[RMDB]
RNA sequence: GGGAACGACUCGAGUAGAGUCGAAAAGUCAUGCCGGAUGGUGAGAUGUUAGAACAGACUGUGCCAGGCGGUCAGCUAUCGGGUGAUUACAACACAUCUUCGAGUAAUUCGAGAAUGAGAGUGAUUGCAAUCUUAGCACCUUCGGGUGCUAAGAUUGAAAAGAAACAACAACAACAAC
Reactivity to 2A3 in 0.01 (KOAc 150mM, MgCl2 10mM, bicine 150mM(pH8.5), 24C), signal-to-noise 4, nucleotides 027 to 126: g030u030c000a000u140g240c000c030g080g050a050u070g020g090u030g020a150g040a080u060g050u150u140a070g050a140a080c090a020g040a060c040u030g050u110g200c070c000a030g100g010c000g020g020u040c020a020g010c020u090a030u120c000g070g030g000u020g020a040u080u080a020c040a100a000c000a020c000a030u000c000u070u020c020g010a030g040u190a270a190u190u020c000g000a040g070a110a070u180g000a030g010a010g090u050g070a230u010u140g030
Reactivity to DMS in 0.01 (KOAc 150mM, MgCl2 10mM, bicine 150mM(pH8.5), 24C), signal-to-noise 3, nucleotides 027 to 126: g010u020c020a090u030g000c000c040g000g000a070u010g010g050u000g000a110g000a130u020g040u030u030a110g020a150a080c150a090g000a080c050u000g000u020g000c040c010a050g010g000c030g000g000u010c040a200g000c020u010a060u010c050g000g010g060u000g000a000u040u050a070c110a080a090c160a050c020a050u000c000u010u010c000g000a000g020u040a110a070u040u000c000g000a000g000a060a010u010g020a030g000a300g010u000g000a060u010u000g000